[RMDB]
RNA sequence: GGGAACGACUCGAGUAGAGUCGAAAAUUUUGUAUUUUUAGUAGAGGCAGGGUUUCACCAUCUUGGCCAGGCUGGUCUUGAACUCCUGACCUCAUGAUCCACCCGUCUCAGCCUGAGCCACUGUGCCGUAAUACUGAAAGUUCGCUUUCAGUAUUACAAAAGAAACAACAACAACAAC
Reactivity to 2A3 in 0.01 (KOAc 150mM, MgCl2 10mM, bicine 150mM(pH8.5), 24C), signal-to-noise 6, nucleotides 027 to 126: u080u090u080u150g030u040a140u060u100u040u080u180a080g050u060a070g010a030g020g000c020a020g020g010g000u050u110u120c040a050c060c010a100u050c060u150u160g000g000c010c010a010g000g000c010u030g010g040u050c020u110u160g040a040a030c010u060c040c000u070g160a300c010c000u020c010a010u030g020a010u000c020c020a030c020c020c010g060u020c030u010c030a010g060c070c010u030g010a030g050c020c000a010c030u120g040u090g090c050c060
Reactivity to DMS in 0.01 (KOAc 150mM, MgCl2 10mM, bicine 150mM(pH8.5), 24C), signal-to-noise 7, nucleotides 027 to 126: u000u000u010u000g000u010a010u000u010u000u010u000a110g000u010a120g010a020g000g010c030a040g010g000g010u000u000u010c060a120c190c110a060u010c130u010u000g010g010c010c010a030g010g010c050u000g000g010u000c070u010u000g010a030a040c040u000c010c010u000g000a090c020c010u000c040a040u000g000a060u010c050c060a100c030c020c020g000u000c060u010c030a060g010c020c010u000g000a110g010c010c020a080c250u000g010u000g020c150c130